[RMDB]
About this RNA: The record gives the reactivity of an RNA of 177 nucleotides to 2A3 and DMS. The DMS profile rests on 990 reads. The 2A3 profile rests on 1,149 reads. For DMS the reverse transcriptase was MarathonRT.

RNA sequence: GGGAACGACUCGAGUAGAGUCGAAAAAACAGCUGCACGUACGUACGAGCAGUUUUCGAAAUAAACGUACGUACGAAAUAAAUAAAUUCUACUCGAUGCGUAACAAAGCAAAGUCGUUCCCAGGGAAUCCUAAAGCAAUCUUCGGAUUGCUUUAGGAAAAAGAAACAACAACAACAAC
Reactivity to 2A3 in 0.01 (KOAc 150mM, MgCl2 10mM, bicine 150mM(pH8.5), 24C), signal-to-noise 1, nucleotides 027 to 126: a000a000c130a040g060c080u120g050c040a010c090g000u010a010c000g000u000a000c000g000a030g090c080a030g000u030u030u070u110c040g150a180a000a000u170a060a070a020c040g000u030a000c000g020u010a000c010g000a030a020a030u140a000a020a000u120a000a010a010u040u040c000u000a010c010u030c010g030a020u100g000c000g000u010a100a030c100a090a040a060g040c020a010a150a000g000u000c000g010u000u010c000c000c000a000g010g020g000a010a060
Reactivity to DMS in 0.01 (KOAc 150mM, MgCl2 10mM, bicine 150mM(pH8.5), 24C), signal-to-noise 1, nucleotides 027 to 126: a050a070c070a100g000c020u000g010c180a300c060g000u000a010c000g000u000a030c000g020a070g000c300a100g030u000u020u000u000c240g000a040a020a060u000a010a240a070c000g010u000a000c040g000u000a000c030g010a110a000a090u000a080a020a070u000a050a050a040u000u000c000u000a000c030u000c020g000a140u000g000c000g000u010a050a120c270a050a000a170g000c020a230a160a070g020u000c000g000u000u000c000c000c000a020g000g000g030a140a160